The record gives the reactivity of an RNA of 177 nucleotides to 2A3 and DMS. For DMS, 38,577 sequencing reads were counted.
[RMDB]
RNA sequence: GGGAACGACUCGAGUAGAGUCGAAAAUGACAGCGGAUAGGCGCGAAAGCGUCUAUUAAUUAGCAAUGACUGUAUGCUAAUUGACUAUUGUGAAAACAAUAGUUUGCUGUCUAACAGUCAUUGAUACGAUCAACUCUAAUUUCGAUUGGGGUUGAUCAAAAGAAACAACAACAACAAC
Reactivity to 2A3 in 0.01 (KOAc 150mM, MgCl2 10mM, bicine 150mM(pH8.5), 24C), signal-to-noise 9, nucleotides 027 to 126: u020g000a000c000a000g000c000g010g000a000u000a000g000g000c000g000c000g000a040a060a010g000c000g000u000c000u000a000u000u000a000a000u000u000a000g000c000a000a020u040g000a000c000u000g000u000a010u030g000c000u000a000a000u000u000g000a000c000u000a000u000u000g000u000g080a040a030a010a010c000a000a000u000a000g000u000u010u010g000c000u000g000u000c000u000a010a000c000a000g000u000c000a000u020u190g050a040u060a050c070
Reactivity to DMS in 0.01 (KOAc 150mM, MgCl2 10mM, bicine 150mM(pH8.5), 24C), signal-to-noise 7, nucleotides 027 to 126: u000g000a010c000a000g010c000g010g000a010u000a000g000g000c000g000c000g000a110a100a180g020c000g020u000c000u000a000u000u000a000a000u000u000a000g010c000a050a130u000g010a010c000u000g010u000a180u010g000c000u000a000a000u000u000g000a000c000u000a000u000u000g000u000g000a150a080a160a020c000a000a000u000a010g000u000u000u000g010c000u000g000u000c000u000a090a040c000a000g010u000c000a140u040u030g000a140u030a100c240